This 177-nucleotide RNA was probed chemically with 2A3 and DMS. The data come from the RNA Mapping Database (RMDB), library OK2TST. DMS adducts were read by reverse transcription with MarathonRT. For 2A3, 2,901 sequencing reads were counted. Reactivities are given for positions 27 through 126. The RNA was probed in 150 mM KOAc, 10 mM MgCl2 and 150 mM bicine (pH 8.5) at 24 C.
RNA sequence: GGGAACGACUCGAGUAGAGUCGAAAAAGAUGCAACCGUACCGAUGACGCUCAACAGGUUACAGGAAUUUCACUUACUGCUCCUCCGAGCUGAGGGGUACUCCGGAGUGCGGCAGCAUGAAAAGGCACGGUAAUGGACUAUUCGUAGUCCAUUACCGAAAAGAAACAACAACAACAAC
Reactivity to 2A3 in 0.01 (KOAc 150mM, MgCl2 10mM, bicine 150mM(pH8.5), 24C), signal-to-noise 2, nucleotides 027 to 126: a000g110a010u060g010c020a020a080c030c020g030u020a000c000c020g030a080u100g040a000c050g030c040u060c030a070a060c040a100g030g080u050u100a040c010a040g050g070a080a100u090u120u150c090a060c060u120u190a040c020u030g000c010u000c000c000u000c030c040g030a030g010c070u010g050a030g000g000g020g050u070a040c010u010c020c050g040g030a130g020u080g010c010g020g000c000a010g010c020a010u060g090a050a070a000a040g070g020c090a000
Reactivity to DMS in 0.01 (KOAc 150mM, MgCl2 10mM, bicine 150mM(pH8.5), 24C), signal-to-noise 4, nucleotides 027 to 126: a060g020a100u010g010c040a080a050c060c020g040u000a110c030c030g000a140u010g000a200c170g020c030u020c040a070a120c160a090g000g000u000u000a050c040a040g030g000a050a090u000u010u000c100a090c190u010u000a100c060u000g000c070u000c020c010u010c160c220g010a050g010c080u010g010a100g010g000g010g000u000a060c060u000c040c050g050g010a100g020u010g010c150g010g000c080a080g010c070a060u000g010a040a060a080a100g010g030c110a110